[RMDB]
RNA sequence: GGGAACGACUCGAGUAGAGUCGAAAAUGACCGAAGACAGUGUGGAGGUUAGCUUAGAAGCAGCUAUCCUUUAAAGAGUGCGUAACAGCUCACUCACCGAGGUUAUUUGCCUCCAAGAUGGAAGAGGUUACUCUUUGCACUUCGGUGCAAAGAGUAAAAAAGAAACAACAACAACAAC
Reactivity to 2A3 in 0.01 (KOAc 150mM, MgCl2 10mM, bicine 150mM(pH8.5), 24C), signal-to-noise 4, nucleotides 027 to 126: u020g010a000c000c000g020a030a010g030a020c020a030g030u030g000u040g060g000a000g000g030u000u010a000g000c000u060u020a020g030a070a010g050c020a000g000c000u000a010u020c000c000u000u010u000a020a030a010g020a000g000u020g000c010g000u020a030a030c010a040g000c000u000c010a020c000u000c000a020c010c010g020a010g000g000u010u010a030u030u050u070g030c010c010u020c010c010a070a030g150a110u170g080g040a090a040g030a050g070g020
Reactivity to DMS in 0.01 (KOAc 150mM, MgCl2 10mM, bicine 150mM(pH8.5), 24C), signal-to-noise 5, nucleotides 027 to 126: u000g000a040c010c000g020a120a090g020a090c300a110g000u000g010u000g000g000a020g020g010u010u010a010g010c010u010u020a130g010a130a220g030c240a040g000c010u010a010u000c000c000u000u000u000a030a060a100g010a110g000u010g000c040g000u010a100a130c210a240g000c010u000c010a010c000u010c010a110c060c060g010a140g010g000u000u000a010u000u000u000g010c080c000u000c030c050a060a050g010a130u010g010g020a040a060g010a050g010g000
This 177-nucleotide RNA was probed chemically with 2A3 and DMS. High 2A3 reactivity points to a flexible backbone, as in loops and unpaired stretches. It was measured as part of the RMDB libraries RFM100 and RFMREP. The reactions ran in a buffer of 150 mM KOAc, 10 mM MgCl2 and 150 mM bicine (pH 8.5), at 24 C.